An RNA of 177 nucleotides, treated with 2A3 and read out base by base. The 2A3 profile rests on 584 reads.

RNA sequence: GGGAACGACUCGAGUAGAGUCGAAAAACGCACUUACGAGUGCGAAGUUAUGCGACUAACUUCGUUCAGUUUGGUGUCAUACGAAGGUUUCCAGUUUCAUCACUGGGCAAAGUUUGUCGCAUAAAAAGGUUCCCAGGGUUUUCGAACCCUGGGAACCAAAAGAAACAACAACAACAAC
Reactivity to 2A3 in 0.01 (KOAc 150mM, MgCl2 10mM, bicine 150mM(pH8.5), 24C), signal-to-noise 1, nucleotides 027 to 126: a000c000g020c020a000c000u000u080a010c300g050a000g010u000g000c010g000a020a000g020u020u040a010u000g000c040g030a000c000u000a000a000c000u000u000c000g000u000u000c000a010g020u100u170u110g000g000u000g030u040c000a040u090a300c140g160a150a000g110g050u010u080u160c070c000a030g000u000u030u000c000a050u000c000a020c000u000g080g000g000c000a000a010a000g000u000u040u040g010u000c000g000c000a000u010a000a000a000a000a000